[RMDB]
RNA sequence: GGGAACGACUCGAGUAGAGUCGAAAAGAAGGGUGAAAGCCCUUGAUACUGUAGUGGAAAUUAUAAAUAAGAAGAGUUCUGAGUUGCUUAAGCAGAACGAAAAUAAAAAGACAAGCAUUAUUACAAACAUGGCGAGGUAAGUUCGCUUACCUCGCAACCACGAUACCUAGUUCGCUAGGUAUCGUGGAAAAGAAACAACAACAACAAC
Reactivity to 2A3 in 0.01 (KOAc 150mM, MgCl2 10mM, bicine 150mM(pH8.5), 24C), signal-to-noise 1, nucleotides 027 to 156: g070a020a010g000g050g000u080g020a100a050a050g010c000c000c030u000u000g040a060u110a110c050u050g040u090a030g020u020g040g040a070a010a060u200u060a020u120a240a170a000u140a040a040g050a010a000g020a050g050u030u010c010u010g040a040g090u110u160g070c020u120u030a090a000g000c000a000g000a020a020c060g000a060a000a020a000u210a030a060a020a000a000g080a020c090a030a020g000c000a000u080u000a040u010u120a160c120a030a060a010c080a090u110g140g000c000g000a000g000g000u000a000a010g010u000u040c080g020c060u000u000a000c000c000u000c000g000c020a000a000
An RNA of 207 nucleotides, treated with 2A3 and read out base by base. It was measured as part of the RMDB library M2RFPK. The reactions ran in a buffer of 150 mM KOAc, 10 mM MgCl2 and 150 mM bicine (pH 8.5), at 24 C.